[RMDB]
RNA sequence: GGGAACGACUCGAGUAGAGUCGAAAAACUAGUAUGUACAGGGGUGAGUUGACCUGUCAUCUAGACUGCGGACCAUCAACUCACCGGUCAGCUGGAUGAUGUCCACAGAGUACGACAUCAGUACUCAGUGUAAUCACUAGUUCGCUGGUGGUUACACAAAAGAAACAACAACAACAAC
Reactivity to 2A3 in 0.01 (KOAc 150mM, MgCl2 10mM, bicine 150mM(pH8.5), 24C), signal-to-noise 9, nucleotides 027 to 126: a000c010u020a010g030u070a160u270g090u100a020c030a040g260g030g020g030u030g020a030g010u010u020g050a040c000c020u020g040u050c000a020u050c020u040a060g070a120c050u060g030c060g030g010a030c040c030a050u020c000a000a010c010u000c010a010c000c000g010g020u020c010a010g000c010u020g020g020a070u070g020a030u080g080u030c010c010a060c050a070g010a000g020u020a010c050g090a040c110a190u130c060a070g000u010a010c000u000c020a010
Reactivity to DMS in 0.01 (KOAc 150mM, MgCl2 10mM, bicine 150mM(pH8.5), 24C), signal-to-noise 9, nucleotides 027 to 126: a110c010u000a020g010u010a050u010g000u050a010c020a050g010g020g010g020u010g000a020g010u010u000g000a030c080c020u000g010u020c020a060u020c150u030a100g000a090c120u000g000c100g000g000a090c070c170a270u000c020a010a010c010u000c010a020c010c010g010g000u000c040a030g000c020u000g000g010a060u010g010a070u020g000u010c020c030a100c170a100g000a020g010u000a020c030g010a150c180a100u040c150a090g010u000a010c010u000c010a140